[RMDB]
RNA sequence: GGGAACGACUCGAGUAGAGUCGAAAAAUAUCUGGCGAAGAUCCGCAGUGCCAAACAAAUGGGACGCUUAGAGCGCAACCAGCUCGGUUGCUCCAACUUGGCGCACGGCUAUGCUGCCAUGCCUAAAAGUAGGGUAAUGCUUCGGCAUUACCCUACUAAAAGAAACAACAACAACAAC
Reactivity to DMS in 0.01 (KOAc 150mM, MgCl2 10mM, bicine 150mM(pH8.5), 24C), signal-to-noise 1, nucleotides 027 to 126: a090u000a060u070c120u000g000g170c040g000a140a080g000a110u000c000c000g010c280a150g070u030g000c040c000a000a020a000c170a080a030a060u000g000g020g000a030c020g000c000u000u000a220g070a040g000c030g000c200a130a110c200c100a170g060c000u000c050g000g000u040u080g060c020u000c020c000a080a020c030u000u000g000g000c030g050c000a300c000g000g050c110u010a100u070g000c020u000g000c000c000a070u000g140c000c000u000a030a080a060
Reactivity to 2A3 in 0.01 (KOAc 150mM, MgCl2 10mM, bicine 150mM(pH8.5), 24C), signal-to-noise 2, nucleotides 027 to 126: a000u210a100u050c070u000g020g000c010g010a120a010g120a090u100c020c000g020c110a120g000u000g040c000c000a000a030a100c020a000a160a000u100g000g000g040a060c080g000c000u080u130a040g000a030g030c040g050c030a000a120c110c010a020g030c020u050c060g020g000u050u180g000c000u050c000c000a000a010c040u000u010g000g060c000g040c000a050c000g020g000c000u050a010u230g020c000u000g000c000c000a000u050g010c000c010u030a070a060a010